[RMDB]
This 177-nucleotide RNA was probed chemically with 2A3 and DMS. DMS adducts were read by reverse transcription with MarathonRT. The reactions ran in a buffer of 150 mM KOAc, 10 mM MgCl2 and 150 mM bicine (pH 8.5), at 24 C. 2A3 adducts were read by reverse transcription with SuperScript II with manganese. 2A3 is a SHAPE reagent: it acylates the 2'-hydroxyl of flexible nucleotides of all four kinds.

RNA sequence: GGGAACGACUCGAGUAGAGUCGAAAACUGAUCGCUAGCCAUGUGACUAGUCUAGUCGAGGUACUCAUGUCAUGCUAGCAUGGUACGUACGAUCGGAUCGCUAGGGUACAUAGUGUCUAGCCAUGUCACCAGGCACUAAAUUCGUUUAGUGCCUGGUAAAAGAAACAACAACAACAAC
Reactivity to 2A3 in 0.01 (KOAc 150mM, MgCl2 10mM, bicine 150mM(pH8.5), 24C), signal-to-noise 5, nucleotides 027 to 126: c010u030g030a060u060c040g000c010u010a000g000c010c000a010u020g010u000g020a010c010u010a010g120u130c040u050a040g030u020c000g020a020g010g040u030a020c050u060c240a020u040g090u090c040a100u250g150c070u140a040g020c000a000u000g010g000u050a040c080g030u050a040c010g020a140u090c050g010g010a040u080c050g020c030u010a010g060g050g130u070a030c010a010u060a040g080u080g030u080c010u000a000g000c000c010a070u100g030u040c010
Reactivity to DMS in 0.01 (KOAc 150mM, MgCl2 10mM, bicine 150mM(pH8.5), 24C), signal-to-noise 5, nucleotides 027 to 126: c040u000g020a040u000c280g010c010u000a010g020c010c030a070u010g010u010g000a070c010u000a010g000u000c060u000a080g010u000c010g010a150g000g000u000a010c010u020c030a040u000g000u010c100a100u010g030c240u000a150g010c000a000u000g010g000u010a020c040g040u000a090c020g000a030u000c090g010g010a180u010c260g000c030u000a020g010g000g020u000a030c010a030u000a090g030u010g010u000c000u000a030g000c010c100a050u000g010u010c110